Structure probing data (2A3 and DMS) for a 177-nucleotide construct. For DMS the reverse transcriptase was MarathonRT. Values are in units of 0.01, from 0 to 300, in steps of 10.
RNA sequence: GGGAACGACUCGAGUAGAGUCGAAAACCAGCUGGGGUGAGCGGCAUUCUAGCGACAGGCCGGAAGUGGUUAUUUCUUCAAUGCGACAACUAAUUAUAAAAGCACCGAAGAGGGCUUUCGGCGAUAUUAGAGAUACUAAUUUCGAUUAGUAUCUCUAAAAAGAAACAACAACAACAAC
Reactivity to 2A3 in 0.01 (KOAc 150mM, MgCl2 10mM, bicine 150mM(pH8.5), 24C), signal-to-noise 9, nucleotides 027 to 126: c000c010a010g010c010u020g000g020g010g010u030g020a110g120c050g080g020c040a010u030u000c010u020a010g010c010g070a080c090a090g210g010c010c000g010g010a010a010g010u040g040g110u190u130a130u130u150u000c000u010u000c010a060a120u080g020c020g090a050c060a110a020c080u220a140a150u300u100a150u100a160a090a020a020g000c000a010c030c050g000a010a000g010a000g000g010g000c000u000u000u000c000g020g000c020g010a010u020a070u080
Reactivity to DMS in 0.01 (KOAc 150mM, MgCl2 10mM, bicine 150mM(pH8.5), 24C), signal-to-noise 6, nucleotides 027 to 126: c010c020a130g010c070u020g000g010g010g010u000g000a170g000c120g010g010c020a030u010u010c010u010a040g020c060g010a100c180a100g000g000c000c000g000g010a020a020g030u010g000g010u060u030a100u010u010u000c000u000u000c000a080a130u020g010c000g000a120c230a080a110c210u050a090a090u020u040a130u020a080a100a130a220g000c020a020c200c140g000a030a010g000a040g000g000g000c020u000u000u000c000g000g010c000g010a040u020a040u000

For 2A3 the reverse transcriptase was SuperScript II with manganese. It was measured as part of the RMDB libraries RFM100 and RFMREP.